[RMDB]
RNA sequence: GGGAACGACUCGAGUAGAGUCGAAAACGCGUACGAGCUAUGCUCGCUGCGAUCGCGCGAUCCGCACAGCGCGGAUCUAUAGUGAUCCGGCGCGCAUGUGAUCAGACGUGACGAUACAGCGAUCAGCCACGACGCACAACUUCGGUUGUGCGUCGUGAAAAGAAACAACAACAACAAC
Reactivity to 2A3 in 0.01 (KOAc 150mM, MgCl2 10mM, bicine 150mM(pH8.5), 24C), signal-to-noise 2, nucleotides 027 to 126: c030g040c020g000u040a020c020g000a040g010c040u090a020u070g000c010u010c010g000c020u020g030c170g050a010u000c000g030c030g010c020g020a110u000c010c030g050c050a030c080a160g120c050g000c020g070g010a000u010c000u030a270u100a110g100u080g020a000u010c030c010g030g110c030g000c000g020c050a020u030g050u010g020a060u090c050a010g030a070c020g010u010g050a040c060g010a030u110a110c010a040g000c030g090a100u070c070a000g060c000
Reactivity to DMS in 0.01 (KOAc 150mM, MgCl2 10mM, bicine 150mM(pH8.5), 24C), signal-to-noise 2, nucleotides 027 to 126: c090g000c030g010u000a040c060g000a300g000c030u000a020u000g030c080u000c020g010c040u000g010c220g020a020u000c000g020c010g030c200g000a040u000c010c010g000c010a120c110a150g010c200g030c000g020g000a010u010c000u000a100u020a130g010u010g000a000u000c010c000g000g020c040g000c130g000c020a050u000g010u010g010a210u010c070a060g010a070c030g030u000g000a070c050g000a050u000a060c110a050g000c050g010a020u010c090a070g000c050
Source information
This 177-nucleotide RNA was probed chemically with 2A3 and DMS. Conditions: 150 mM KOAc, 10 mM MgCl2 and 150 mM bicine (pH 8.5), 24 C. For DMS the reverse transcriptase was MarathonRT. Source: RMDB library OK2TRN, as collected in RNAgym.